[RMDB]
RNA sequence: GGGAACGACUCGAGUAGAGUCGAAAAGCUGCAUGAUGCCGCGCAUCUUCAGUCGUCGAUCACCGUGGUGCUGGCCAAACACGAGUUCUCCGCUGCCACGGUGGCCGACGGGUACAGCCGCAGCGGGAGUUCUAUCGGCAUUCGUGCCGAUAGAACUAAAAGAAACAACAACAACAAC
Reactivity to DMS in 0.01 (KOAc 150mM, MgCl2 10mM, bicine 150mM(pH8.5), 24C), signal-to-noise 2, nucleotides 027 to 126: g030c020u000g010c070a030u020g020a030u000g010c000c170g020c260g020c010a050u000c010u000u020c080a090g020u020c020g000u000c040g010a020u000c020a020c010c010g000u000g000g020u010g030c060u010g010g000c110c140a070a050a050c110a130c260g060a150g010u000u000c150u000c000c040g020c040u000g020c000c010a040c010g000g010u000g000g000c020c000g020a030c030g010g000g000u010a110c120a140g000c070c100g020c020a060g000c010g000g000g000
Reactivity to 2A3 in 0.01 (KOAc 150mM, MgCl2 10mM, bicine 150mM(pH8.5), 24C), signal-to-noise 2, nucleotides 027 to 126: g020c020u030g010c010a060u090g010a030u030g040c060c090g120c070g010c050a020u030c000u090u080c030a190g060u040c000g010u000c000g000a000u000c010a010c000c000g000u000g010g000u040g000c140u200g080g000c060c080a060a140a010c110a050c130g220a180g140u090u010c080u000c030c020g010c020u110g000c000c000a010c000g020g000u000g000g000c000c000g010a000c000g010g000g000u090a040c030a030g080c010c040g010c010a000g000c010g010g050g020